An RNA of 207 nucleotides, treated with 2A3 and read out base by base.
Source: RMDB library M2RFPK, as collected in RNAgym.
[RMDB]
RNA sequence: GGGAACGACUCGAGUAGAGUCGAAAAGUAUGGAUGCCACCGUGACGGCUCAAUCACACAAGUGCCAACGAAAACGAGGCGCUCGCUAUUGCUGCGUAACUGACGGCCUGACGGUCUGACGUUACAAAAAACGAAAAGUGGUUCGCCACUUUUCGAAGAUCGUUUUCCACUUCGGUGGAAAACGAUCAAAAGAAACAACAACAACAAC
Reactivity to 2A3 in 0.01 (KOAc 150mM, MgCl2 10mM, bicine 150mM(pH8.5), 24C), signal-to-noise 1, nucleotides 027 to 156: g060u030a040u120g030g070a050u030g000c000c050a040c010c010g020u060g080a100c120g000g010c010u030c090a040a100u100c020a010c010a000c010a130a060g060u020g010c000c010a090a000c100g030a050a020a050a010c060g020a100g040g000c010g000c010u100c000g020c070u080a110u300u260g030c090u080g000c040g030u010a000a000c020u000g030a000c020g010g030c000c010u200g090a060c110g000g000u000c000u000g060a000c030g000u030u030a010c000a020a080a020a000a000a020c010g000a030a000a000a000g000u000g010g000u030u050c050g050c020c000a000c000u010u000u000u000c010g000a050a010